[RMDB]
RNA sequence: GGGAACGACUCGAGUAGAGUCGAAAAGAUAUGGAUACAGCUUUUGACGGCUGAUAAUCGGAAACGAUUAAUAGCCGAUAAGCUGUGAUCCUAAGUCAAAACACGUUCGACUUCGGUCGAACGUGAACGUCAUCUAUUUCUUCGGAAAUAGAUGACGAAAAGAAACAACAACAACAAC
Reactivity to 2A3 in 0.01 (KOAc 150mM, MgCl2 10mM, bicine 150mM(pH8.5), 24C), signal-to-noise 2, nucleotides 027 to 126: g010a010u040a020u130g000g000a000u020a020c000a000g000c030u100u070u180u280g300a170c130g020g000c000u010g010a060u020a010a020u010c010g000g000a000a030a010c010g000a000u000u020a000a070u010a040g010c000c060g140a090u000a040a010g020c000u000g000u050g000a020u000c000c010u000a060a030g000u010c020a000a010a110a110c010a000c000g020u000u020c020g000a020c020u020u110c300g140g000u000c000g000a010a000c000g000u000g010a020a000
Reactivity to DMS in 0.01 (KOAc 150mM, MgCl2 10mM, bicine 150mM(pH8.5), 24C), signal-to-noise 2, nucleotides 027 to 126: g000a030u000a130u010g000g000a000u010a030c000a010g000c010u000u000u000u010g040a130c080g030g000c000u000g000a070u000a010a000u000c000g020g000a070a030a120c020g000a010u000u000a010a110u000a000g020c010c000g000a110u000a020a020g000c000u000g000u000g000a010u000c000c000u000a030a130g000u000c020a100a060a130a200c010a010c010g020u000u000c000g000a020c020u000u010c190g030g000u000c010g020a000a000c000g010u000g000a020a060
Structure probing data (2A3 and DMS) for a 177-nucleotide construct. Reactivities are rounded to 0.1 and cut off at 0 and 3. The RNA was probed in 150 mM KOAc, 10 mM MgCl2 and 150 mM bicine (pH 8.5) at 24 C. For 2A3, 4,054 sequencing reads were counted. DMS adducts were read by reverse transcription with MarathonRT. Source: RMDB library TTRDEL, as collected in RNAgym. 2A3 adducts were read by reverse transcription with SuperScript II with manganese.